An RNA of 207 nucleotides, treated with 2A3 and read out base by base.
RNA sequence: GGGAACGACUCGAGUAGAGUCGAAAAGGGAAAUCAGCACAAUUCCCACUUCAUACGUGGCUUCCAGAUGCAAUGGAGGGUCCAACACCCGUUUCAGCUCUCAUUCAUGCUGCGACAAUGGUGGCCGCCGGUGUGUAUCUCGUUGCACGGAUGUAUGCCUGAAGUAUGACUUCGGUCAUACUUCAGGAAAAGAAACAACAACAACAAC
Reactivity to 2A3 in 0.01 (KOAc 150mM, MgCl2 10mM, bicine 150mM(pH8.5), 24C), signal-to-noise 1, nucleotides 027 to 156: g100g030g030a100a040a030u230c120a100g180c150a040c080a190a090u030u000c010c020c000a040c040u050u110c020a000u050a090c010g010u010g130g170c000u010u030c000c070a050g020a060u030g010c000a050a000u050g000g050a090g110g010g000u030c050c000a090a000c030a040c010c020c060g000u000u000u000c000a010g000c040u040c040u070c070a170u300u100c040a070u260g040c000u000g000c010g010a010c000a050a210u180g030g000u040g000g000c000c000g050c010c000g150g020u260g000u020g000u140a030u000c000u000c000g040u000u000g000c030a000c000g000g000a000u020g080u080a010u080g140
Reactivities are given for positions 27 through 156. Source: RMDB library OK3TST, as collected in RNAgym.